[RMDB]
RNA sequence: GGGAACGACUCGAGUAGAGUCGAAAACAAAAUUUUAACGCUCACCCCACGCAACAAGUGGAGUGGCGUUUCUGACUUGUCCCUCAAACAAAAACUCCUUUACACCUUCUAUGGUAAGGAGUCACUUCCGCUGGCUUCUUCGGAAGCCAGAAAAGAAACAACAACAACAAC
Reactivity to 2A3 in 0.01 (KOAc 150mM, MgCl2 10mM, bicine 150mM(pH8.5), 24C), signal-to-noise 7, nucleotides 027 to 129: c010a040a060a050a040u040u070u050u060a030a010c000g000c030u120c120a010c000c010c030c000a000c000g090c040a060a230c060a300a070g000u010g000g000a020g010u030g000g000c000g000u020u000u020c010u010g110a070c020u030u070g050u050c010c020c000u050c070a090a130a060c090a020a070a020a010a000c020u020c000c000u030u060u110a100c070a050c050c010u230u220c070u210a110u300g020g000u000a000a000g000g000a000g000u000c000a030c020u070u000c030c020g010
Reactivity to DMS in 0.01 (KOAc 150mM, MgCl2 10mM, bicine 150mM(pH8.5), 24C), signal-to-noise 3, nucleotides 027 to 129: c000a010a000a050a130u030u000u020u090a000a000c030g040c020u040c050a040c020c000c010c000a000c000g100c240a130a120c300a190a040g080u030g040g020a110g000u020g000g020c010g000u000u000u060c060u000g020a100c170u000u000g030u020c000c030c000u060c130a040a060a040c210a000a050a030a170a020c010u020c000c030u010u020u050a210c080a040c010c100u040u150c210u000a090u090g020g010u020a070a030g000g030a010g020u000c000a040c070u070u020c090c070g080